[RMDB]
Structure probing data (2A3) for a 207-nucleotide construct. It was measured as part of the RMDB library ARCHII. As a SHAPE reagent, 2A3 marks flexible, mostly unpaired nucleotides at the ribose 2'-OH.
RNA sequence: GGGAACGACUCGAGUAGAGUCGAAAAAUCCAAAGAAUAGAGACAAUCCGCAGCUGACCUGGCCAAAAGUAUAUUUACAAAGUAGCUAGGCAGUUCAACGCUCGCUAAGAUGUGGGUUGACCAUUAAUGGUCGGCUUAAGGUACGGGCUACGCCACCCUGUGGCAUAGGGUUCGCCCUAUGCCACAGAAAAGAAACAACAACAACAAC
Reactivity to 2A3 in 0.01 (KOAc 150mM, MgCl2 10mM, bicine 150mM(pH8.5), 24C), signal-to-noise 1, nucleotides 027 to 156: a000u080c070c000a110a060a000g130a080a060u270a060g120a010g010a040c030a070a150u060c100c010g000c000a000g000c000u010g090a300c000c000u000g000g000c000c000a000a020a010a020g030u000a060u040a100u230u300u060a070c020a030a000a040g010u020a010g000c000u010a000g010g000c010a000g000u020u020c010a120a000c050g000c000u040c000g040c070u050a080a000g000a080u050g050u050g040g000g000u000u060g000a000c010c010a090u160u250a200a170u120g000g010u030c050g020g020c040u090u060a060a070g060g000u020a010c030g010g010g040c030u050a000c070g010c030c000a000c050c000